Notes:
Conditions: 150 mM KOAc, 10 mM MgCl2 and 150 mM bicine (pH 8.5), 24 C. An RNA of 177 nucleotides, treated with DMS and 2A3 and read out base by base. The data come from the RNA Mapping Database (RMDB), library M2PK90. DMS adducts were read by reverse transcription with MarathonRT. 2A3 adducts were read by reverse transcription with SuperScript II with manganese.
RNA sequence: GGGAACGACUCGAGUAGAGUCGAAAAAUUGUGCGGUCUCUGAGAGAGGAGAACCUGUCUGAGAGAGCUUACCGCUUUUCAUAGUCGCUCUCUGAGAGACUCUGAGGCUCCUCUCGUUCCCAACCAAGCUUAUAUACCGAUUCGUCGGUAUAUAAGCAAAAGAAACAACAACAACAAC
Reactivity to DMS in 0.01 (KOAc 150mM, MgCl2 10mM, bicine 150mM(pH8.5), 24C), signal-to-noise 4, nucleotides 027 to 126: a100u000u000g020u000g020c110g000g010u000c090u000c070u000g010a120g000a030g000a040g010g000a060g020a060a080c070c060u010g010u000c050u000g010a040g000a020g000a010g010c020u000u000a080c210c160g010c020u000u010u010u010c120a070u010a050g010u000c180g010c000u000c000u000c010u000g010a100g010a050g000a010c050u000c130u000g020a140g010g000c000u000c000c000u000c020u000c000g000u000u000c010c000c000a120a080c230c150a090a110
Reactivity to 2A3 in 0.01 (KOAc 150mM, MgCl2 10mM, bicine 150mM(pH8.5), 24C), signal-to-noise 6, nucleotides 027 to 126: a000u220u160g060u070g040c080g010g030u020c020u000c030u210g030a020g000a000g000a000g070g010a140g040a150a130c050c030u070g070u020c050u080g030a050g000a010g000a010g060c040u080u120a090c050c040g020c060u030u040u050u050c060a060u080a060g050u050c020g010c040u000c000u000c010u030g020a030g000a000g010a060c020u000c050u140g080a060g020g000c000u010c010c010u010c000u010c000g010u000u010c000c000c000a010a000c020c010a040a010